[RMDB]
RNA sequence: GGGAACGACUCGAGUAGAGUCGAAAACGAGAUGAGUUCGCUCAUCUCGAAAGAACCGCGGGCGUGACUCGGUGAGAGCAUGACAGGCGCUGCGGUCACGAAAAAGUGGUGUGUUCGCACACCACAAGUUCUUAUGCAUCUUCGGAUGCAUAAGAACAAAAGAAACAACAACAACAAC
Reactivity to DMS in 0.01 (KOAc 150mM, MgCl2 10mM, bicine 150mM(pH8.5), 24C), signal-to-noise 3, nucleotides 027 to 126: c000g010a000g010a020u000g010a000g000u010u010c300g010c010u000c000a010u000c010u000c000g010a020a080a080g000a120a030c010c010g010c020g000g000g000c020g030u000g000a130c020u000c020g000g020u010g000a230g000a050g010c060a080u010g020a080c180a100g010g000c020g030c010u010g010c020g000g000u000c020a050c150g010a050a060a050a090a120g020u020g010g010u000g030u000g010u000u000c210g020c010a000c000a010c000c000a000c000a010a050
Reactivity to 2A3 in 0.01 (KOAc 150mM, MgCl2 10mM, bicine 150mM(pH8.5), 24C), signal-to-noise 4, nucleotides 027 to 126: c000g000a000g000a010u010g000a010g050u070u110c180g060c090u000c000a010u000c000u000c000g000a000a010a010g020a050a020c000c010g000c060g020g040g000c030g010u060g080a170c010u000c030g020g060u300g100a130g000a010g030c060a090u100g150a090c060a090g230g010c040g000c050u010g000c000g030g000u000c010a050c070g130a100a040a060a040a020g000u010g000g000u010g020u010g010u010u090c210g010c080a000c000a000c000c000a000c000a000a000
This 177-nucleotide RNA was probed chemically with DMS and 2A3. High 2A3 reactivity points to a flexible backbone, as in loops and unpaired stretches. The 2A3 profile rests on 6,657 reads. Values are in units of 0.01, from 0 to 300, in steps of 10. The DMS profile rests on 2,835 reads. 2A3 adducts were read by reverse transcription with SuperScript II with manganese. For DMS the reverse transcriptase was MarathonRT. It was measured as part of the RMDB library M2PK50.